Source: RMDB library OK2TST, as collected in RNAgym. The record gives the reactivity of an RNA of 177 nucleotides to 2A3 and DMS. The 2A3 profile rests on 1,630 reads.
RNA sequence: GGGAACGACUCGAGUAGAGUCGAAAACAAUUACUACACCGAUGAUAGGUAAUGCCUCAACUAAACCUACACCAAUGAACAUGAUACCCAUUAAUUGACCACGUGCUUCUGGUUGACGUGCUACACCCCGUUUAACACCUUUCGAGGUGUUAAACGGAAAAGAAACAACAACAACAAC
Reactivity to 2A3 in 0.01 (KOAc 150mM, MgCl2 10mM, bicine 150mM(pH8.5), 24C), signal-to-noise 2, nucleotides 027 to 126: c010a000a020u150u070a110c040u060a060c000a070c040c060g110a130u080g040a060u050a110g010g000u030a010a050u110g040c010c010u030c030a020a040c020u090a060a130a040c020c040u060a030c020a020c070c020a050a060u150g040a030a040c020a040u080g040a050u120a080c000c010c030a060u080u130a040a120u110u080g020a030c000c010a020c050g010u070g080c010u020u090c010u020g000g090u070u060g030a050c020g000u040g010c000u030a030c000a070c040c010
Reactivity to DMS in 0.01 (KOAc 150mM, MgCl2 10mM, bicine 150mM(pH8.5), 24C), signal-to-noise 2, nucleotides 027 to 126: c130a140a070u020u000a040c060u000a060c100a060c050c060g000a050u000g000a070u000a000g020g010u010a050a060u000g000c050c010u000c080a050a110c090u000a080a090a090c040c030u000a080c040a040c030c010a070a130u000g020a080a050c110a050u010g010a060u000a100c060c020c020a080u000u010a060a080u000u000g010a040c070c060a090c060g000u000g000c100u000u000c040u000g000g000u000u000g000a060c050g000u000g000c060u000a050c110a110c030c020

For DMS, 1,444 sequencing reads were counted.